[RMDB]
RNA sequence: GGGAACGACUCGAGUAGAGUCGAAAAAGCAGGAGUACGCUCCUGCAUGGGUAGACGAAUUGACCCCAACUGAAGUUCAAUUCUAACGUUUAAAGGAGUUUUAUAUGACUGGACGUACGCGUCCAGAUGACGAUUUCAUUCUUCGGAAUGAAAUCAACCAUUAAAUCAAGUUCGCUUGAUUUAAUGGAAAAGAAACAACAACAACAAC
Reactivity to 2A3 in 0.01 (KOAc 150mM, MgCl2 10mM, bicine 150mM(pH8.5), 24C), signal-to-noise 5, nucleotides 027 to 156: a010g000c000a000g000g020a010g000u060a060c170g020c080u000c000c000u030g000c000a000u020g000g000g030u120a100g040a210c060g010a020a010u000u000g000a000c000c000c000c030a080a070c140u300g050a010a000g040u100u010c010a000a000u020u000c010u090a120a080c090g060u040u070u220a090a050a040g120g030a070g040u050u050u100u070a190u060a080u170g140a060c010u000g010g000a000c000g000u050a030c230g020c000g090u000c000c000a000g000a000u020g050a020c100g000a000u000u000u000c000a000u000u000c000u030u050c120g080g000a000a000u010g000a000a000a000u000c000a000a010
Reactivity to DMS in 0.01 (KOAc 150mM, MgCl2 10mM, bicine 150mM(pH8.5), 24C), signal-to-noise 2, nucleotides 027 to 156: a130g000c010a010g000g020a040g050u000a060c300g020c000u000c000c000u000g000c000a030u010g020g000g000u000a080g000a160c100g000a030a060u010u010g020a060c000c010c020c000a100a250c170u000g020a060a040g000u000u000c030a030a050u000u000c020u000a120a140c120g000u000u000u000a060a080a150g010g020a290g000u000u000u000u000a060u010a110u030g000a190c010u010g000g020a020c000g030u000a080c250g030c050g010u000c000c000a030g000a020u010g000a080c080g000a040u000u000u000c000a020u000u000c000u000u000c300g070g000a040a000u000g000a000a000a010u000c010a090a140